RNA sequence: GGGAACGACUCGAGUAGAGUCGAAAAGUAUCGGUGAUGAUCGUGCCAAUGGCUUCGACCGUGGUGAACAUCAGGGUAAAAGCGAUAGUUGCGGGAUUGCCCGACGCGAACGCCGCCGCCAGAUCCGGGCAUAGGAAAGAUUCGUCUUUCCUAUGCCAAAAGAAACAACAACAACAAC
Reactivity to DMS in 0.01 (KOAc 150mM, MgCl2 10mM, bicine 150mM(pH8.5), 24C), signal-to-noise 3, nucleotides 027 to 126: g010u000a090u020c020g020g010u000g010a060u000g010a080u000c040g040u000g020c030c100a100a060u010g010g000c000u010u000c300g010a050c010c000g000u000g020g010u000g010a120a080c140a040u000c040a040g010g010g020u000a040a040a020a090g000c010g000a050u000a090g010u000u000g030c030g010g000g030a160u000u000g010c010c000c020g000a070c040g040c000g000a050a080c090g040c030c030g010c060c020g000c060c040a130g000a090u000c030c070g030
Reactivity to 2A3 in 0.01 (KOAc 150mM, MgCl2 10mM, bicine 150mM(pH8.5), 24C), signal-to-noise 2, nucleotides 027 to 126: g100u070a050u130c030g010g020u050g000a060u030g010a020u060c050g060u030g050c000c020a070a120u140g050g000c020u090u040c050g100a150c020c090g120u000g000g010u060g090a060a040c040a100u010c000a040g000g030g070u100a070a070a030a020g050c060g060a090u060a130g140u120u120g020c000g000g110g060a210u050u250g110c000c010c020g040a010c000g010c020g020a040a010c010g010c000c020g050c000c000g030c030c020a020g000a040u020c040c020g140